An RNA of 177 nucleotides, treated with 2A3 and DMS and read out base by base. Source: RMDB library TTRINS, as collected in RNAgym. High DMS reactivity at an A or C suggests that its Watson-Crick edge is free. The RNA was probed in 150 mM KOAc, 10 mM MgCl2 and 150 mM bicine (pH 8.5) at 24 C. For DMS, 11,071 sequencing reads were counted.

RNA sequence: GGGAACGACUCGAGUAGAGUCGAAAAGAUAUGGACGAAGAAUACGCUUGGAUUUACUUAACACAGUUUCCAUAUCGGAAACGAUAUGGUAGCUGUGUUAAGUUGUCAGCGUACUUCGUCCUAAGUCCAGUAACAGUUUGUUCGCAAACUGUUACUGAAAAGAAACAACAACAACAAC
Reactivity to 2A3 in 0.01 (KOAc 150mM, MgCl2 10mM, bicine 150mM(pH8.5), 24C), signal-to-noise 3, nucleotides 027 to 126: g070a010u150a040u240g010g000a010c020g000a010a010g060a300a200u060a020c010g020c050u170u300g120g000a080u300u300u230a050c000u030u000a000a000c000a000c010a010g000u040u060u000c000c000a000u000a010u000c000g000g030a040a100a000c020g000a000u000a000u000g020g000u020a000g000c010u000g000u000g000u010u000a010a000g000u000u000g010u010c000a000g000c000g010u000a000c010u000u000c000g000u000c000c000u010a010a010g000u000c000
Reactivity to DMS in 0.01 (KOAc 150mM, MgCl2 10mM, bicine 150mM(pH8.5), 24C), signal-to-noise 5, nucleotides 027 to 126: g000a090u010a300u010g010g000a020c000g000a020a010g010a190a180u000a010c000g020c010u010u010g010g010a020u010u010u000a020c000u000u000a000a010c000a000c000a000g010u000u000u000c000c000a000u000a010u000c010g010g000a120a090a260c000g010a010u000a000u000g000g010u000a010g010c000u010g000u000g000u000u000a000a000g000u000u000g010u000c010a030g000c000g010u000a020c000u000u000c000g000u000c000c000u010a000a080g010u000c050